[RMDB]
Background
The record gives the reactivity of an RNA of 177 nucleotides to DMS and 2A3. Source: RMDB library M2PK50, as collected in RNAgym.
RNA sequence: GGGAACGACUCGAGUAGAGUCGAAAAGAAGAGAACUUCGGUUCUCUUCAAAGCUGUUACCCACGGCAAGAAAUCCCGGAACAUUGGCUCGUUAGCGGGAGAAAACCGGGAAGUUCGCUUCCCGGAAGACCCUUAUUAAGUUCGCUUAAUAAGGGUCAAAAGAAACAACAACAACAAC
Reactivity to DMS in 0.01 (KOAc 150mM, MgCl2 10mM, bicine 150mM(pH8.5), 24C), signal-to-noise 3, nucleotides 027 to 126: g010a020a020g010a000g010a010a000c000u000u020c180g030g020u000u000c000u000c000u000u000c010a060a110a120g020c020u000g000u000u010a170c030c020c020a300c020g000g000c020a160a120g000a060a110a110u000c000c010c000g010g000a040a030c050a110u000u010g010g010c130u000c120g000u000u000a060g020c020g000g000g000a060g010a030a050a130a130c010c000g010g000g020a010a010g010u000u020c170g010c020u000u000c010c000c000g000g000a050a040
Reactivity to 2A3 in 0.01 (KOAc 150mM, MgCl2 10mM, bicine 150mM(pH8.5), 24C), signal-to-noise 3, nucleotides 027 to 126: g000a000a000g010a020g000a010a000c010u060u080c200g030g000u000u010c000u010c000u010u000c010a000a000a000g000c000u000g030u060u120a060c000c010c010a000c000g020g000c030a050a030g050a090a150a030u010c020c010c010g030g030a020a010c020a080u070u220g180g030c060u020c080g020u040u030a110g220c010g030g040g010a030g030a000a050a000a030c000c000g000g000g010a000a000g000u010u030c120g020c100u000u000c010c000c010g000g000a000a010